Structure probing data (2A3 and DMS) for a 207-nucleotide construct. For 2A3, 875 sequencing reads were counted. The DMS profile rests on 6,011 reads. Source: RMDB library M2RFPK, as collected in RNAgym. 2A3 adducts were read by reverse transcription with SuperScript II with manganese. The RNA was probed in 150 mM KOAc, 10 mM MgCl2 and 150 mM bicine (pH 8.5) at 24 C. For DMS the reverse transcriptase was MarathonRT.
RNA sequence: GGGAACGACUCGAGUAGAGUCGAAAAGCUUAAUAACCUGCGCUGAGCCCUUCUCCCCCAGCUUGCUUGUGUCCUAGGGAAUUGGAAGGUCAUCCUUCACAGGAUCGUGUGGAAGUCCUGCUCGGGGUCCAAACAUGGUAAUUCGUUACCAUGUUAAAUCCGUAAACUAGUUCGCUAGUUUACGGAUAAAAGAAACAACAACAACAAC
Reactivity to 2A3 in 0.01 (KOAc 150mM, MgCl2 10mM, bicine 150mM(pH8.5), 24C), signal-to-noise 2, nucleotides 027 to 156: g000c020u120u010a140a000u130a200a230c000c040u110g040c070g020c150u140g020a080g020c020c030c030u130u040c080u080c000c000c000c000c000a010g030c020u040u020g040c020u040u050g010u020g040u070c010c000u010a050g060g000g060a050a100u160u070g020g010a060a010g000g000u050c030a130u180c020c010u050u030c010a010c010a050g020g030a010u030c020g050u050g020u050g040g030a020a060g040u040c000c020u010g030c000u000c000g000g000g000g000u050c040c000a100a070a000c000a000u010g000g000u020a000a000u040u010c000g000u010u000a000c000c000a000u000g000u010u010a030a050
Reactivity to DMS in 0.01 (KOAc 150mM, MgCl2 10mM, bicine 150mM(pH8.5), 24C), signal-to-noise 2, nucleotides 027 to 156: g030c060u000u030a140a100u000a090a110c010c000u010g020c060g010c050u020g010a100g010c030c010c030u010u010c040u000c020c000c000c020c050a120g000c070u000u000g020c050u000u000g030u000g030u010c020c020u000a110g030g040g020a070a110u010u000g010g020a060a090g020g020u000c080a110u000c020c010u000u000c070a100c050a060g000g010a060u010c050g040u010g000u000g000g020a110a090g000u010c020c020u000g030c030u000c050g000g000g030g010u000c030c030a060a040a010c000a010u000g000g030u000a000a070u000u000c260g030u010u000a010c000c000a010u000g000u000u000a020a080